[RMDB]
Annotation:
The record gives the reactivity of an RNA of 177 nucleotides to 2A3. The 2A3 profile rests on 548 reads.

RNA sequence: GGGAACGACUCGAGUAGAGUCGAAAACAGGCUGUCGUCAACAACACAGUUUUUGGCGUCAACGACGAAGCUGGCCGCCACAACGCCCUCAUCGACGAGUUGGCCACUGUCGUCAUCAAGAAAAUAGAUCGCACAGUCACUUCGGUGACUGUGCGAUAAAAGAAACAACAACAACAAC
Reactivity to 2A3 in 0.01 (KOAc 150mM, MgCl2 10mM, bicine 150mM(pH8.5), 24C), signal-to-noise 2, nucleotides 027 to 126: c020a000g220g060c050u060g000u120c000g000u000c000a060a060c000a020a010c060a030c060a140g060u000u000u000u030u000g100g000c000g000u000c000a010a000c130g180a000c000g060a140a000g000c100u020g000g000c000c000g050c120c040a120c070a160a040c100g030c100c020c000u000c010a180u110c030g110a090c060g010a000g140u050u120g040g080c040c010a000c000u220g100u020c000g020u010c020a140u000c000a010a050g180a080a060a010a030u090a030g170